[RMDB]
Structure probing data (2A3 and DMS) for a 177-nucleotide construct. Source: RMDB library OK1LIB, as collected in RNAgym. Conditions: 150 mM KOAc, 10 mM MgCl2 and 150 mM bicine (pH 8.5), 24 C. 2A3 is a SHAPE reagent: it acylates the 2'-hydroxyl of flexible nucleotides of all four kinds. 2A3 adducts were read by reverse transcription with SuperScript II with manganese. Values cover nucleotides 27 to 126.
RNA sequence: GGGAACGACUCGAGUAGAGUCGAAAACUCUUUCACGGUUAUGUCUGUCUCUGGCAGAGCAGACAGUCAGGAGGAAGAGGUCACCAUCUUCACGAAGCCAAAGCCAAAUUCCGCCUUGUCCUGUAAACAGUAUGAUCGGGUUCGCCCGAUCAUACUGAAAAGAAACAACAACAACAAC
Reactivity to 2A3 in 0.01 (KOAc 150mM, MgCl2 10mM, bicine 150mM(pH8.5), 24C), signal-to-noise 3, nucleotides 027 to 126: c000u010c010u040u040u010c050a040c060g020g000u170u170a110u090g010u000c000u010g120u070c000u000c000u020g300g040c170a020g000a010g000c000a000g000a000c000a010g010u010c000a020g010g150a100g030g000a010a000g010a000g020g010u020c010a030c050c010a030u060c030u090u050c050a070c080g070a040a020g010c020c000a060a030a020g000c000c000a000a090a130u090u000c000c000g010c000c000u040u050g020u030c010c010u070g040u130a030a060a020
Reactivity to DMS in 0.01 (KOAc 150mM, MgCl2 10mM, bicine 150mM(pH8.5), 24C), signal-to-noise 2, nucleotides 027 to 126: c000u000c000u000u000u000c000a100c030g010g020u000u040a010u020g010u000c020u020g050u040c000u020c000u020g040g020c180a230g010a000g010c000a000g000a000c000a000g000u010c130a090g000g000a090g000g070a060a010g020a060g000g020u000c060a080c040c070a100u040c030u000u010c030a110c050g000a190a120g010c000c040a050a070a190g010c030c030a030a100a110u010u020c020c000g000c040c040u000u010g010u000c010c050u000g000u000a060a030a180